[RMDB]
RNA sequence: GGGAACGACUCGAGUAGAGUCGAAAAGCUUUUCGAGCAGUGAUUGUAUUAUCGCUAAUCGCUACCUUAGUAACAGCAUUGCAUCUCGGUGGUGCAUCGAUAGGGCUAAGUUUAAUAUGGCGUUGAAGAAUUUAACAAGUUUCGACUUGUUAAAUUCAAAAGAAACAACAACAACAAC
Reactivity to DMS in 0.01 (KOAc 150mM, MgCl2 10mM, bicine 150mM(pH8.5), 24C), signal-to-noise 9, nucleotides 027 to 126: g010c050u000u010u010u010c070g010a090g020c180a040g030u000g010a030u000u010g000u010a080u010u000a030u000c030g020c030u000a100a110u000c030g020c090u000a080c280c010u000u000a030g010u000a060a070c080a110g010c240a080u000u000g010c020a020u000c010u010c280g010g020u000g010g020u000g000c010a020u000c060g010a060u010a080g000g010g000c010u000a020a030g000u010u010u000a060a100u010a100u010g010g010c050g010u000u000g000a110a150
Reactivity to 2A3 in 0.01 (KOAc 150mM, MgCl2 10mM, bicine 150mM(pH8.5), 24C), signal-to-noise 6, nucleotides 027 to 126: g010c000u070u080u070u130c060g030a030g010c030a010g020u030g040a050u040u100g120u260a110u200u080a020u080c020g000c040u030a060a060u080c010g000c030u030a070c010c000u030u010a020g020u050a170a080c020a030g050c030a060u000u090g000c010a030u000c050u060c090g220g040u230g030g010u010g010c000a020u030c080g050a050u070a080g080g010g000c010u020a020a010g020u040u100u090a120a140u150a110u150g050g000c050g010u040u050g050a100a070

Notes: The data come from the RNA Mapping Database (RMDB), library OK2TST. Structure probing data (DMS and 2A3) for a 177-nucleotide construct. DMS adducts were read by reverse transcription with MarathonRT. The DMS profile rests on 19,565 reads.